[RMDB]
RNA sequence: GGGAACGACUCGAGUAGAGUCGAAAAAUCAGAACUAAUGUAAAGCCACCUAAAUCUCCUGCUGCUAAAAUAACAACGAUAAUUGUUAAAGGAUGGAUACUUAAAGAUUUACCCAUUACAUUUGGCGCUUCACAUGCAGGUUCGCCUGCAUGUGAAGAAAAGAAACAACAACAACAAC
Reactivity to DMS in 0.01 (KOAc 150mM, MgCl2 10mM, bicine 150mM(pH8.5), 24C), signal-to-noise 1, nucleotides 027 to 126: a150u000c080a150g000a110a100c190u020a030a030u030g010u100a050a140a150g000c040c000a030c060c030u000a030a170a120u010c040u000c000c020u000g050c010u000g000c110u000a000a170a010a070u000a040a040c040a000a090c070g040a050u030a060a140u000u000g020u000u000a020a020a030g000g000a060u040g000g000a000u000a070c030u000u000a040a130a050g000a000u050u000u010a010c010c000c040a040u000u000a090c080a000u000u000u010g000g000c090g000
Reactivity to 2A3 in 0.01 (KOAc 150mM, MgCl2 10mM, bicine 150mM(pH8.5), 24C), signal-to-noise 3, nucleotides 027 to 126: a000u110c080a050g060a150a050c040u110a250a030u090g040u080a120a000a000g020c000c000a010c010c000u020a130a110a130u030c030u010c020c040u020g010c000u020g010c040u110a000a040a170a230u050a050a000c040a050a000c040g060a050u070a100a210u120u000g010u020u060a080a030a000g060g030a020u080g060g000a010u020a120c030u100u110a110a150a010g110a050u060u080u090a060c030c000c000a010u030u180a080c060a190u120u110u080g210g000c060g020